Chemical mapping of a 177-nucleotide RNA with 2A3 and DMS.
[RMDB]
RNA sequence: GGGAACGACUCGAGUAGAGUCGAAAAUUUUAUUUGAGGAAAUUUGAUUGUAUUGCAUAUACAACUAUGCGAUGCACUUUGUUCAUUUUAACUUUGGAUAUAUGUGCCUUGCUAUGAACGCGUUCAUUGUCAUAAACCAAUUCGUUGGUUUAUGACAAAAAGAAACAACAACAACAAC
Reactivity to 2A3 in 0.01 (KOAc 150mM, MgCl2 10mM, bicine 150mM(pH8.5), 24C), signal-to-noise 2, nucleotides 027 to 126: u010u070u010u080a110u020u050u070g050a030g000g130a010a050a030u080u120u080g060a060u010u060g010u020a010u010u070g020c030a020u040a000u000a210c030a080a030c070u030a010u010g000c000g000a000u000g020c000a020c020u030u060u090g050u000u030c020a040u000u060u030u090a130a130c050u070u020u030g000g000a000u000a010u010a010u080g060u030g020c010c020u050u060g000c020u070a070u140g060a070a040c060g000c040g070u050u040c040a040u060
Reactivity to DMS in 0.01 (KOAc 150mM, MgCl2 10mM, bicine 150mM(pH8.5), 24C), signal-to-noise 3, nucleotides 027 to 126: u010u020u000u000a000u010u010u000g010a050g000g010a080a080a050u000u010u010g000a070u000u010g000u000a020u000u000g010c050a070u010a040u000a100c270a050a160c100u000a050u010g020c000g010a020u020g000c010a020c300u010u020u010g000u000u000c000a010u000u020u000u010a050a140c090u010u000u000g010g000a020u000a030u010a010u000g000u000g000c000c050u000u000g010c040u000a150u010g010a060a090c190g020c100g010u010u000c020a130u010
Background: The RNA was probed in 150 mM KOAc, 10 mM MgCl2 and 150 mM bicine (pH 8.5) at 24 C. 2A3 adducts were read by reverse transcription with SuperScript II with manganese. Reactivities are given for positions 27 through 126. Source: RMDB libraries RFM100 and RFMREP, as collected in RNAgym.